[RMDB]
RNA sequence: GGGAACGACUCGAGUAGAGUCGAAAACUCCCCUCAAAAUCGAUUCAGUCCAAAAUUGAUUCGGCGGCCCUGUCAUGAGGCCGAAACGAAGGCACGUACCCCUUCGAAUGGCGUCGGGGAGUCAGCGAAAGCACUGACCCUUUCGAGGGUCAGUGAACUAAAUAGACCUCUUCGGAGGUCUAUUUAGAAAAGAAACAACAACAACAAC
Reactivity to 2A3 in 0.01 (KOAc 150mM, MgCl2 10mM, bicine 150mM(pH8.5), 24C), signal-to-noise 2, nucleotides 027 to 156: c000u010c010c010c000c010u090c040a180a200a070a110u070c020g000a010u030u060c010a030g140u100c070c070a140a170a080a060u050u070g010a070u070u000c040g060g000c040g000g000c070c000c030u020g030u090c020a060u070g030a020g020g040c000c000g070a010a000a000c000g000a010a010g020g020c090a020c190g180u220a100c040c000c000c000u000u000c020g010a020a020u030g020g000c060g070u090c040g020g000g000g010a010g010u030c030a020g030c010g100a130a020a020g070c010a000c000u010g000a010c000c000c020u010u000u090c170g040a010g000g000g010u000c000a000g000u000g010a010a000
Reactivity to DMS in 0.01 (KOAc 150mM, MgCl2 10mM, bicine 150mM(pH8.5), 24C), signal-to-noise 2, nucleotides 027 to 156: c070u000c030c020c000c040u000c070a060a040a110a050u000c030g000a030u010u000c120a070g050u000c130c130a100a050a200a090u000u010g020a000u010u000c000g040g040c010g030g040c000c010c000u000g020u000c170a120u000g050a070g040g060c030c030g000a030a050a210c020g000a070a050g000g030c050a120c090g000u000a150c060c090c000c000u000u000c000g020a110a110u000g000g000c040g020u010c060g020g020g000g020a080g030u000c030a140g000c050g010a060a070a210g020c000a010c010u010g010a010c000c000c000u000u010u000c210g000a020g010g040g030u000c010a000g000u000g000a030a090
Conditions: 150 mM KOAc, 10 mM MgCl2 and 150 mM bicine (pH 8.5), 24 C. Structure probing data (2A3 and DMS) for a 207-nucleotide construct. For 2A3, 1,172 sequencing reads were counted. For 2A3 the reverse transcriptase was SuperScript II with manganese. For DMS, 3,138 sequencing reads were counted. The data come from the RNA Mapping Database (RMDB), library M2RFPK.